[RMDB]
The data come from the RNA Mapping Database (RMDB), library TTRDEL. An RNA of 177 nucleotides, treated with 2A3 and DMS and read out base by base. The reactions ran in a buffer of 150 mM KOAc, 10 mM MgCl2 and 150 mM bicine (pH 8.5), at 24 C. 2A3 adducts were read by reverse transcription with SuperScript II with manganese. DMS adducts were read by reverse transcription with MarathonRT.
RNA sequence: GGGAACGACUCGAGUAGAGUCGAAAAGAUAUGGACGUUGUAGGGAGCUGGUCGGAAACGACUCAGCAUCGAUCUACGGGCGUCCUAAGUCAAAAGCUGCCUUCUAGGUUCGCCUAGAAGGCAGCAACGAAGAAACUUAGUUCGCUAAGUUUCUUCGAAAAGAAACAACAACAACAAC
Reactivity to 2A3 in 0.01 (KOAc 150mM, MgCl2 10mM, bicine 150mM(pH8.5), 24C), signal-to-noise 2, nucleotides 027 to 126: g020a010u080a030u110g010g000a010c010g000u030u020g020u030a020g000g060g020a020g000c010u020g000g010u030c010g010g060a050a050a040c010g010a010c060u070c300a000g000c000a030u180c020g000a030u000c000u010a010c120g060g080g030c010g000u000c000c000u000a050a020g030u050c050a030a030a060a110g000c000u000g000c010c000u000u000c000u010a010g050g010u040u110c300g080c060c000u000a000g000a000a000g000g010c010a000g010c010a000a000
Reactivity to DMS in 0.01 (KOAc 150mM, MgCl2 10mM, bicine 150mM(pH8.5), 24C), signal-to-noise 5, nucleotides 027 to 126: g000a040u000a300u010g000g000a010c010g020u000u000g010u000a020g000g010g010a040g040c000u000g000g010u010c000g000g000a110a070a190c000g000a010c010u020c010a010g020c000a190u000c130g010a050u010c000u000a010c010g020g020g010c000g000u000c000c010u000a020a080g000u010c030a100a090a120a110g010c000u000g000c000c000u000u000c000u000a000g000g000u000u010c230g010c010c000u000a010g010a010a000g000g010c000a000g000c000a010a020